[RMDB]
RNA sequence: GGGAACGACUCGAGUAGAGUCGAAAAUAGAAGCCCCGGAGAUACCCCUGCUUCGUCAGGCAGUCUGUACCGCGUACAGCCUGAAACUCCCUAAACCUCAACAACCAGCCACUCCGGCGUGAAGGUAUAAAACGGUACUGUUCGCAGUACCGUUUUAAAAAGAAACAACAACAACAAC
Reactivity to DMS in 0.01 (KOAc 150mM, MgCl2 10mM, bicine 150mM(pH8.5), 24C), signal-to-noise 1, nucleotides 027 to 126: u010a300g040a280a300g000c040c140c130c220g000g000a030g000a110u000a060c100c080c070c000u000g000c000u000u050c050g000u030c010a000g000g000c060a060g000u000c060u000g000u010a070c040c250g000c250g000u020a030c010a010g030c010c000u000g000a030a090a070c020u020c030c000c000u000a060a150a020c040c000u010c050a100a060c090a080a180c050c070a060g040c020c020a160c110u010c020c020g010g000c080g000u010g010a050a090g010g000u010a110
Reactivity to 2A3 in 0.01 (KOAc 150mM, MgCl2 10mM, bicine 150mM(pH8.5), 24C), signal-to-noise 1, nucleotides 027 to 126: u050a000g160a130a120g000c000c000c000c050g060g040a060g020a030u220a300c070c000c000c070u000g030c000u020u100c010g160u200c100a000g040g000c000a000g050u030c010u010g020u010a020c020c110g110c020g030u030a010c010a020g020c010c000u000g020a070a010a000c030u010c000c000c000u070a170a180a110c000c030u080c020a030a060c000a000a070c030c020a000g000c020c000a030c050u080c030c020g020g020c000g000u040g030a020a030g090g040u110a100